The record gives the reactivity of an RNA of 177 nucleotides to 2A3 and DMS. The RNA was probed in 150 mM KOAc, 10 mM MgCl2 and 150 mM bicine (pH 8.5) at 24 C.

[RMDB]
RNA sequence: GGGAACGACUCGAGUAGAGUCGAAAAGAAAGAAAGGUGCUGAGUGAGGCUGAGCCCCUGACCUUGAACCUGGGAUCCUAUCCAUGAUCUCCUGGUGCUACCGUCAGGGGUAGAUUCCUUGUCAUAAAUGAUUAUCACCGUUCGCGGUGAUAAUCAUAAAAGAAACAACAACAACAAC
Reactivity to 2A3 in 0.01 (KOAc 150mM, MgCl2 10mM, bicine 150mM(pH8.5), 24C), signal-to-noise 4, nucleotides 027 to 126: g060a000a060a000g070a030a050a010g110g000u120g020c030u040g040a090g050u100g020a040g050g020c040u050g020a020g000c000c000c000c000u000g000a000c000c040u090u110g030a030a000c000c000u020g000g010g000a000u020c020c000u090a120u120c090c050a160u250g010a010u010c110u040c030c030u020g000g000u040g020c040u070a050c040c020g010u000c000a000g000g050g020g000u000a000g000a000u000u020c020c000u000u050g070u060c010a030u040a240a160
Reactivity to DMS in 0.01 (KOAc 150mM, MgCl2 10mM, bicine 150mM(pH8.5), 24C), signal-to-noise 3, nucleotides 027 to 126: g030a080a080a070g000a060a050a030g000g010u000g030c030u010g000a070g010u040g010a070g000g000c060u000g000a300g000c050c000c000c000u000g000a010c010c090u020u010g020a050a030c010c000u000g000g000g000a010u000c010c300u030a090u020c220c220a080u020g000a020u000c000u040c000c050u000g000g000u000g000c050u020a080c240c300g000u000c000a000g000g000g010g000u000a000g000a030u020u020c010c010u000u040g010u010c080a060u020a060a050
For 2A3, 2,235 sequencing reads were counted. DMS adducts were read by reverse transcription with MarathonRT.